[RMDB]
RNA sequence: GGGAACGACUCGAGUAGAGUCGAAAACGUGAGCUUCGGCUCACGAAAAAGGGGUCGCACUAAGACAGGACAUGCCUACUAUACUGAAGCCUCCACGGUAUAAGGCAACAGCUCGAGUGCGACGGAGGCACCCAAAAAAGCAAUGUUCGCAUUGCAAUUGUCCUAUACCAUUCGUGGUAUAGGACAAAAAAGAAACAACAACAACAAC
Reactivity to DMS in 0.01 (KOAc 150mM, MgCl2 10mM, bicine 150mM(pH8.5), 24C), signal-to-noise 2, nucleotides 027 to 156: c000g040u000g000a050g040c000u010u000c300g070g000c020u010c000a020c000g010a000a050a020a110a110g030g020g010g030u000c010g030c030a060c040u000a070a130g030a190c060a200g020g010a140c140a200u010g010c000c000u000a090c180u000a070u000a040c000u010g040a030a170g030c020c010u010c020c030a300c010g020g000u000a040u000a020a070g020g000c010a050a060c110a090g000c010u000c050g010a000g010u000g040c030g020a020c010g020g030a040g120g030c010a160c000c000c000a000a080a080a080a080a120g010c010a020a040u000g030u000u010c230g000c050a030u000u000g010c030a040a100
Reactivity to 2A3 in 0.01 (KOAc 150mM, MgCl2 10mM, bicine 150mM(pH8.5), 24C), signal-to-noise 5, nucleotides 027 to 156: c000g010u010g000a000g010c020u060u110c300g150g010c000u010c000a000c000g040a020a010a000a000a010g170g010g030g000u010c000g010c010a000c010u070a210a120g070a080c140a120g100g150a070c060a120u060g000c000c000u100a190c100u040a040u000a010c000u000g030a100a000g010c010c000u000c010c000a020c000g000g000u000a010u010a030a030g020g020c010a090a080c080a110g050c020u010c030g030a000g000u000g000c000g000a000c000g010g000a000g000g000c000a020c000c000c000a020a070a030a030a000a000g070c000a000a000u140g010u070u180c280g030c120a000u000u000g000c000a030a050